Chemical mapping of a 177-nucleotide RNA with 2A3 and DMS. For 2A3, 5,018 sequencing reads were counted. For DMS the reverse transcriptase was MarathonRT.

[RMDB]
RNA sequence: GGGAACGACUCGAGUAGAGUCGAAAAAAGAUGAGAAAGUGCAGUAUUGACUGUCUUCAAACGCACCUGUCCUUGCUCAAGUGCUGGGAUUGUGUGCCAACGGCUAUGAUAGAUAUGAAUAGAGCACGACUUAUACUGUCUUCGGACAGUAUAAGUCAAAAGAAACAACAACAACAAC
Reactivity to 2A3 in 0.01 (KOAc 150mM, MgCl2 10mM, bicine 150mM(pH8.5), 24C), signal-to-noise 5, nucleotides 027 to 126: a000a000g100a040u140g010a020g080a080a070a020g030u070g040c020a010g060u070a080u100u100g140a090c020u020g020u000c010u000u030c020a080a060a050c060g000c000a000c000c000u000g000u000c000c000u010u010g010c010u080c140a230a140g130u080g090c000u030g000g020g000a000u010u070g070u040g010u000g100c000c010a090a050c070g080g020c030u080a050u170g030a040u050a070g050a020u060a030u180g070a060a020u030a070g090a010g050c020a010c070
Reactivity to DMS in 0.01 (KOAc 150mM, MgCl2 10mM, bicine 150mM(pH8.5), 24C), signal-to-noise 4, nucleotides 027 to 126: a080a070g000a100u020g020a130g010a110a100a070g000u000g000c000a120g000u010a090u000u000g010a190c160u000g000u000c010u000u000c030a040a080a110c290g010c010a010c010c000u000g010u000c000c010u000u000g010c010u010c180a080a090g010u000g010c020u000g010g010g010a030u000u000g000u010g010u000g010c020c120a050a060c240g010g010c170u000a100u000g000a040u000a030g010a070u000a050u000g000a110a020u000a070g000a180g020c030a030c080